[RMDB]
RNA sequence: GGGAACGACUCGAGUAGAGUCGAAAAGGCUGGCUGGGGGCGUCUGGAGAGUCAUCUCUAAGCCCGCCACCAAGGAAGCAGAAUUUCGGGAGCGGCUGACCCAGUUCCUGGAAGAAGAGGGCCGCACCCCAUUUUUCCUAUUCGUAGGAAAAAUGGGAAAAGAAACAACAACAACAAC
Reactivity to DMS in 0.01 (KOAc 150mM, MgCl2 10mM, bicine 150mM(pH8.5), 24C), signal-to-noise 4, nucleotides 027 to 126: g000g010c040u000g020g020c110u010g010g000g010g010g020c000g020u010c110u000g000g010a030g000a050g020u000c300a060u000c010u000c010u000a070a120g000c170c180c020g010c000c020a040c020c010a060a130g010g010a100a040g020c050a090g000a130a160u000u000u000c040g000g000g000a120g020c010g010g000c030u010g000a150c050c010c020a130g000u000u000c020c020u000g010g010a130a110g000a110a120g010a160g010g000g010c010c020g000c080a130c170
Reactivity to 2A3 in 0.01 (KOAc 150mM, MgCl2 10mM, bicine 150mM(pH8.5), 24C), signal-to-noise 1, nucleotides 027 to 126: g050g000c020u020g000g010c010u020g070g020g000g000g000c030g010u020c070u020g010g040a060g020a020g090u190c070a170u000c050u020c000u010a100a040g000c040c040c000g000c000c000a010c000c010a000a070g100g050a030a090g000c020a060g080a300a160u040u060u120c090g020g000g000a070g010c040g040g000c030u090g110a120c010c000c000a010g040u040u010c050c000u030g060g000a060a100g010a090a040g020a100g030g050g010c010c000g030c030a040c010